[RMDB]
RNA sequence: GGGAACGACUCGAGUAGAGUCGAAAAGCAACGUAAAGCCGCGGCAAGUGGAGUUAGCGAGAAGAGACUAGGCUUUGGUUUCUUCAAGUGAAGCGGUCACCAAUCAGGUGUGGUAGUUACCGUAAAAAUAACCGCUCUUUGUUCGCAAAGAGCGGAAGAUUGAGGGUAUCUUCGGAUACCCUCAAUCAAAAGAAACAACAACAACAAC
Reactivity to 2A3 in 0.01 (KOAc 150mM, MgCl2 10mM, bicine 150mM(pH8.5), 24C), signal-to-noise 2, nucleotides 027 to 156: g030c030a000a060c040g030u100a090a140a000g000c000c000g030c070g000g000c020a040a140g000u010g030g090a070g040u210u080a030g030c020g000a060g000a030a000g000a000g010a000c040u040a060g110g150c000u110u150u150g020g000u000u000u000c000u000u010c000a010a020g020u010g080a060a010g000c010g000g020u020c000a020c020c000a020a100u110c040a050g120g000u090g040u030g060g040u040a090g010u070u100a030c000c020g020u060a080a040a070a010a000u170a080a070c020c000g000c000u010c000u000u010u000g020u020u050c090g000c140a000a000a000g000a000g000c000g000g000a000a000
Reactivity to DMS in 0.01 (KOAc 150mM, MgCl2 10mM, bicine 150mM(pH8.5), 24C), signal-to-noise 1, nucleotides 027 to 156: g000c020a120a060c010g040u010a050a030a130g030c070c030g020c100g030g050c020a040a230g040u000g030g030a160g000u000u020a260g050c030g080a300g030a050a030g000a090g000a040c060u000a130g010g010c100u020u000u000g030g000u020u000u000c000u000u000c010a030a240g010u020g020a190a190g050c010g000g040u010c000a040c060c000a000a160u000c070a020g030g050u010g010u000g030g040u020a030g010u000u000a110c030c010g070u000a010a070a080a090a030u020a040a130c000c020g000c000u000c000u000u000u010g000u000u010c300g050c030a000a000a020g000a010g040c070g040g000a000a040

Source information:
Chemical mapping of a 207-nucleotide RNA with 2A3 and DMS. It was measured as part of the RMDB library M2RFPK. Conditions: 150 mM KOAc, 10 mM MgCl2 and 150 mM bicine (pH 8.5), 24 C. Reactivities are given for positions 27 through 156.